Chemical mapping of a 177-nucleotide RNA with 2A3 and DMS. Values are in units of 0.01, from 0 to 300, in steps of 10. 2A3 adducts were read by reverse transcription with SuperScript II with manganese.
[RMDB]
RNA sequence: GGGAACGACUCGAGUAGAGUCGAAAACGUUACCACGUACUACUGUGCUGCUAGUGCCGGCAUGAACGGCGGCGGCGGCGCCUACAAGCCUAACCGCUCUUGCGGGCAGGUACGCGCCGUCCUCGUAGGAGCAACUAUGGUUCGCCGUAGUUGCUCCAAAAGAAACAACAACAACAAC
Reactivity to 2A3 in 0.01 (KOAc 150mM, MgCl2 10mM, bicine 150mM(pH8.5), 24C), signal-to-noise 9, nucleotides 027 to 126: c040g040u070u110a080c020c030a060c060g070u060a040c030u020a030c030u080g040u060g090c030u020g030c020u050a040g060u060g180c060c010g040g000c050a090u130g070a110a020c050g050g000c000g010g010c010g000g000c000g000g010c000g000c000c010u140a130c070a160a060g020c000c000u050a070a070c010c010g030c010u110c130u250u300g010c010g000g020g000c020a010g000g020u040a040c040g000c000g000c000c000g020u030c000c010u030c010g030u040a090
Reactivity to DMS in 0.01 (KOAc 150mM, MgCl2 10mM, bicine 150mM(pH8.5), 24C), signal-to-noise 5, nucleotides 027 to 126: c080g000u010u010a090c050c040a140c110g010u010a060c080u000a060c090u000g010u010g020c030u000g010c070u000a070g010u000g000c020c010g000g050c050a070u030g010a080a070c110g010g010c020g000g010c190g000g000c000g000g000c020g000c000c120u020a100c170a070a080g000c010c030u000a070a230c030c020g010c020u020c230u010u040g010c010g010g000g010c270a020g010g010u010a020c300g010c000g000c000c000g010u020c000c010u010c030g000u020a150